[RMDB]
RNA sequence: GGGAACGACUCGAGUAGAGUCGAAAAAACGGUGAGCCGGUGCCGAUCUUCAUCGCCGACUACGUGCUGGCCGGGUACGGUACCGGGGCAAUCAUGGCGGUGCCGGGUCAUGACCAGCGGGACUGGGCCUCCUUCUGACAUUCGUGUCAGAAGGAGGAAAAGAAACAACAACAACAAC
Reactivity to DMS in 0.01 (KOAc 150mM, MgCl2 10mM, bicine 150mM(pH8.5), 24C), signal-to-noise 2, nucleotides 027 to 126: a010a020c150g020g040u050g000a050g000c000c000g010g010u010g000c000c000g030a060u030c030u000u020c150a030u030c080g000c000c010g010a150c060u000a060c080g000u000g000c000u000g000g000c100c060g000g000g010u000a040c000g010g000u000a050c060c040g000g000g030g020c050a110a020u060c180a120u000g000g040c010g000g010u010g010c010c020g060g000g000u000c000a030u010g010a030c020c000a080g020c060g050g000g000a180c020u000g000g000g010
Reactivity to 2A3 in 0.01 (KOAc 150mM, MgCl2 10mM, bicine 150mM(pH8.5), 24C), signal-to-noise 3, nucleotides 027 to 126: a010a010c090g040g000u040g020a050g070c000c000g000g000u010g000c020c010g120a150u020c020u120u100c040a090u060c020g020c030c010g080a100c040u140a040c080g050u070g030c010u040g080g080c040c020g090g020g030u070a010c020g020g000u060a080c070c030g000g000g030g000c000a030a050u090c030a070u060g050g000c010g000g010u010g000c000c000g000g000g040u020c000a030u050g070a070c000c000a000g020c030g020g070g020a040c030u030g010g000g000

This 177-nucleotide RNA was probed chemically with DMS and 2A3. Reactivities are given for positions 27 through 126. 2A3 adducts were read by reverse transcription with SuperScript II with manganese. The reactions ran in a buffer of 150 mM KOAc, 10 mM MgCl2 and 150 mM bicine (pH 8.5), at 24 C.